Conditions: 150 mM KOAc, 10 mM MgCl2 and 150 mM bicine (pH 8.5), 24 C. Chemical mapping of a 207-nucleotide RNA with DMS and 2A3. 2A3 adducts were read by reverse transcription with SuperScript II with manganese. The 2A3 profile rests on 1,326 reads.

[RMDB]
RNA sequence: GGGAACGACUCGAGUAGAGUCGAAAAUGGACUUUUUACAGUUCCUACUUAUCCGGUUUUAACGCUGUUUUAUUGGCGCAUAGGUUUACGGAUAAACAACUAAUAAUUAAACCUUUUGUGUGCGAAAAUUGGACGUUUAGGUUCGCCUAAACGUCAAUCAAUAUCCACGGUUCGCCGUGGAUAUUGAAAAAGAAACAACAACAACAAC
Reactivity to DMS in 0.01 (KOAc 150mM, MgCl2 10mM, bicine 150mM(pH8.5), 24C), signal-to-noise 2, nucleotides 027 to 156: u010g000g010a060c030u020u020u000u000u000a130c110a130g000u010u000c020c030u000a080c100u010u000a060u000c000c000g060g000u000u010u000u000a170a050c020g010c000u020g010u000u000u000u000a200u040u020g020g010c020g000c010a090u000a040g010g010u000u000u020a170c000g000g010a050u000a020a030a200c050a070a130c130u000a150a070u000a100a170u010u000a020a010a030c020c020u000u000u000u000g000u000g000u010g000c020g010a070a010a080a210u000u000g000g020a010c030g010u000u010u000a000g010g010u010u010c300g000c000c010u000a010a020a020c000g010u000c000a000a020
Reactivity to 2A3 in 0.01 (KOAc 150mM, MgCl2 10mM, bicine 150mM(pH8.5), 24C), signal-to-noise 3, nucleotides 027 to 156: u140g070g010a060c070u120u100u050u150u170a130c170a050g000u100u090c000c010u030a040c030u040u020a010u000c000c000g000g000u000u000u000u050a050a010c020g000c020u010g170u210u100u030u210a140u140u230g020g000c020g000c020a020u020a020g000g010u020u000u000a000c010g000g000a020u030a050a080a030c050a050a020c050u180a070a120u090a220a050u120u220a030a010a020c010c000u010u060u130u130g080u000g000u030g010c090g060a050a030a080a120u120u160g120g000a000c000g010u000u000u000a010g000g040u030u040c170g060c050c000u000a000a000a000c000g000u000c000a000a000